[RMDB]
RNA sequence: GGGAACGACUCGAGUAGAGUCGAAAACGGACGGGAUUUUAGCCAGGUUGCAGGUUUACCCAUUUCGUGCUGGGUCCUGGACCCACUUAAGAUGAUAGAAAUAUUAUCGAUUUCUUUACCGUCCGGAACUGGAUAUAUUAUUCGUAAUAUAUCCAGUAAAAGAAACAACAACAACAAC
Reactivity to 2A3 in 0.01 (KOAc 150mM, MgCl2 10mM, bicine 150mM(pH8.5), 24C), signal-to-noise 5, nucleotides 027 to 126: c010g000g000a000c000g020g000g080a080u040u080u090u240a050g050c080c050a020g060g030u010u160g180c000a000g020g000u140u260u190a040c000c000c000a010u090u210u200c150g050u130g100c060u010g000g000g000u040c000c000u010g010g010a010c000c010c000a030c000u040u040a060a030g000a020u030g010a020u020a030g040a020a050a020u050a030u060u080a030u040c020g030a050u010u120u030c020u030u110u070a100c000c010g000u000c000c000g000g000a010
Reactivity to DMS in 0.01 (KOAc 150mM, MgCl2 10mM, bicine 150mM(pH8.5), 24C), signal-to-noise 9, nucleotides 027 to 126: c000g010g000a010c010g010g000g000a100u000u000u010u000a030g020c170c150a100g000g010u000u000g010c010a010g000g000u020u010u010a060c000c000c000a050u000u010u010c210g010u000g020c290u000g010g000g000u000c000c020u000g000g000a030c010c000c170a070c070u000u000a090a150g000a010u000g000a030u000a010g000a130a070a120u000a010u000u000a020u000c040g000a160u000u000u000c070u000u000u000a160c010c000g000u000c000c000g010g010a060